This 177-nucleotide RNA was probed chemically with DMS and 2A3.
For 2A3, 1,598 sequencing reads were counted.
2A3 adducts were read by reverse transcription with SuperScript II with manganese.
For DMS the reverse transcriptase was MarathonRT.
Values cover nucleotides 27 to 126.
High 2A3 reactivity points to a flexible backbone, as in loops and unpaired stretches.
Conditions: 150 mM KOAc, 10 mM MgCl2 and 150 mM bicine (pH 8.5), 24 C.

[RMDB]
RNA sequence: GGGAACGACUCGAGUAGAGUCGAAAAGGACGUGACAAGCAGGACAUGACAUGGUCCGGUGUGACGGCGAGGACAGAGGAGGCGCGUCCGGCCUUCCUGAACACCUUAGGCUGGUGGGGCUGCGGCAGUAACGUGCCUUUUUCGAAAGGCACGUUACAAAAGAAACAACAACAACAAC
Reactivity to DMS in 0.01 (KOAc 150mM, MgCl2 10mM, bicine 150mM(pH8.5), 24C), signal-to-noise 2, nucleotides 027 to 126: g020g000a070c040g060u010g000a120c060a090a090g000c030a160g010g020a060c050a030u010g010a110c160a100u010g030g010u010c010c040g020g010u000g010u000g010a090c060g010g000c090g000a040g010g010a110c090a030g000a080g010g020a030g000g000c050g000c080g010u010c070c030g020g000c020c000u000u000c010c030u000g000a110a090c160a070c020c060u000u020a120g020g000c020u010g010g000u000g010g020g000g010c040u020g010c110g010g000c070a100
Reactivity to 2A3 in 0.01 (KOAc 150mM, MgCl2 10mM, bicine 150mM(pH8.5), 24C), signal-to-noise 1, nucleotides 027 to 126: g040g010a030c050g020u020g000a040c000a110a000g050c080a130g080g020a000c030a060u120g030a040c050a140u210g020g020u000c010c010g000g000u090g020u030g050a010c020g030g010c040g010a040g010g010a030c010a010g100a080g050g030a000g020g030c050g000c000g110u040c000c000g000g000c000c000u030u020c000c000u010g050a070a070c090a090c000c030u010u040a020g030g090c020u050g090g000u060g030g000g010g000c040u060g010c050g020g030c020a040